[RMDB]
RNA sequence: GGGAACGACUCGAGUAGAGUCGAAAAGCUUAUGGACCCGAACCUGGGUGAUCUAUCCAUGACCAGGAUGAAGCUUGGGUGAAACUAAGUGGAGGUCCGAACCGACUGAUGUUGAAAAAUCAGCGGAUGAGUCGUGGUUAGGGGUGAAAUGCCACUCAUGAAACUUAAGAUUCGUCUUAAGUUUCAUAAAAGAAACAACAACAACAAC
Reactivity to DMS in 0.01 (KOAc 150mM, MgCl2 10mM, bicine 150mM(pH8.5), 24C), signal-to-noise 4, nucleotides 027 to 156: g020c080u000u000a140u010g030g010a120c030c010c020g020a080a130c050c010u010g010g020g030u010g010a060u000c030u010a070u000c010c050a070u000g020a060c030c040a250g010g010a050u000g000a300a300g010c010u000u010g010g000g010u000g020a260a140a230c030u000a030a060g000u000g010g010a300g000g000u010c020c010g010a080a160c010c000g000a140c000u000g000a030u000g010u000u010g000a040a110a090a160a040u000c010a010g000c000g010g000a100u000g000a060g040u020c030g030u010g000g010u000u010a050g010g000g040g000u000g000a060a110a090u000g010c000c010a060c040u000c090
Reactivity to 2A3 in 0.01 (KOAc 150mM, MgCl2 10mM, bicine 150mM(pH8.5), 24C), signal-to-noise 4, nucleotides 027 to 156: g020c030u160u130a100u250g050g060a050c020c020c030g050a080a100c030c070u100g000g000g020u040g050a070u040c030u040a020u000c010c010a020u030g020a020c020c010a040g000g010a010u070g020a030a000g000c000u000u000g020g000g000u060g050a060a040a070c010u010a020a020g010u030g020g040a070g030g160u000c010c010g010a070a070c020c000g220a290c060u000g000a000u010g060u290u200g140a090a070a020a010a020u000c000a000g000c000g020g000a020u100g040a040g010u010c000g010u000g000g000u010u020a020g010g010g000g000u030g030a080a040a060u140g020c020c010a030c010u050c000
Chemical mapping of a 207-nucleotide RNA with DMS and 2A3. The DMS profile rests on 9,520 reads. The data come from the RNA Mapping Database (RMDB), library OK3TST. For 2A3, 4,962 sequencing reads were counted.